[RMDB]
Description
An RNA of 177 nucleotides, treated with DMS and 2A3 and read out base by base. High 2A3 reactivity points to a flexible backbone, as in loops and unpaired stretches. For DMS, 1,727 sequencing reads were counted.
RNA sequence: GGGAACGACUCGAGUAGAGUCGAAAAGGAGCUUGAUUCGUCAAGCUCCAAAAGUUACAGACCCGAUUCCUAGCGUAAACAAGAAGCUAUGCACCGAGGCAAAAAGGAAUGGAUUCGUCCAUUCCAACUAUAGAGGGACGUUCGCGUCCCUCUAUAGAAAAGAAACAACAACAACAAC
Reactivity to DMS in 0.01 (KOAc 150mM, MgCl2 10mM, bicine 150mM(pH8.5), 24C), signal-to-noise 2, nucleotides 027 to 126: g030g010a010g020c010u010u000g000a010u010u020c150g000u000c000a000a000g020c000u000c010c000a000a030a080a070g000u010u010a080c170a190g010a140c020c000c010g020a120u000u000c020c010u010a040g010c010g000u030a020a060a120c160a080a070g000a090a090g030c030u000a050u000g000c080a080c050c010g000a090g020g000c080a020a070a080a050a110g000g000a010a000u000g000g000a050u010u020c190g000u020c000c010a010u000u000c000c000a000a040
Reactivity to 2A3 in 0.01 (KOAc 150mM, MgCl2 10mM, bicine 150mM(pH8.5), 24C), signal-to-noise 1, nucleotides 027 to 126: g020g000a000g000c000u000u030g030a010u040u060c040g020u000c040a010a000g010c000u000c000c000a010a000a000a000g000u030u100a030c030a030g150a130c000c000c010g030a060u040u070c010c010u040a020g000c010g110u150a050a130a180c020a000a200g140a090a020g050c020u020a020u070g000c020a010c040c060g040a010g070g000c030a010a030a000a110a050g000g000a000a000u000g000g010a010u010u060c180g050u080c030c000a000u000u060c010c000a000a000